[RMDB]
Conditions: 150 mM KOAc, 10 mM MgCl2 and 150 mM bicine (pH 8.5), 24 C. Structure probing data (DMS and 2A3) for a 177-nucleotide construct. 2A3 adducts were read by reverse transcription with SuperScript II with manganese. DMS adducts were read by reverse transcription with MarathonRT. It was measured as part of the RMDB library OK2TST.

RNA sequence: GGGAACGACUCGAGUAGAGUCGAAAAGGCCUGACUAGAUUUGCCACCACAGCCCCUACACCAAUCUGGCCAUGGCACAGCCAGCUCCUAUUUUCACACACAGCUUCUGGAAAGCACACCCAGGGACCUUAGAAGACUAUUUCGAUAGUCUUCUAAGAAAAGAAACAACAACAACAAC
Reactivity to DMS in 0.01 (KOAc 150mM, MgCl2 10mM, bicine 150mM(pH8.5), 24C), signal-to-noise 6, nucleotides 027 to 126: g010g000c050c020u000g010a090c080u010a120g000a120u000u000u000g000c030c020a080c080c050a070c060a090g000c030c010c020c030u000a080c100a090c070c060a060a080u000c030u010g000g010c020c030a050u000g010g010c040a080c210a110g000c020c020a030g010c100u000c010c020u000a090u000u010u000u000c050a060c090a060c060a060c090a070g010c040u010u010c040u000g000g000a050a050a080g020c050a050c080a090c040c010c020a090g010g000g010a080c130
Reactivity to 2A3 in 0.01 (KOAc 150mM, MgCl2 10mM, bicine 150mM(pH8.5), 24C), signal-to-noise 2, nucleotides 027 to 126: g040g020c000c020u020g040a040c050u060a060g030a230u110u030u170g030c030c010a020c020c010a050c040a050g040c000c000c000c010u030a020c000a000c030c030a010a080u040c020u040g000g000c030c000a050u040g040g000c030a010c000a060g010c020c010a010g010c000u030c000c000u040a100u140u050u070u060c050a060c000a000c000a010c000a050g000c000u030u020c010u060g020g020a100a010a010g000c020a020c000a010c020c000c010a020g010g010g050a020c020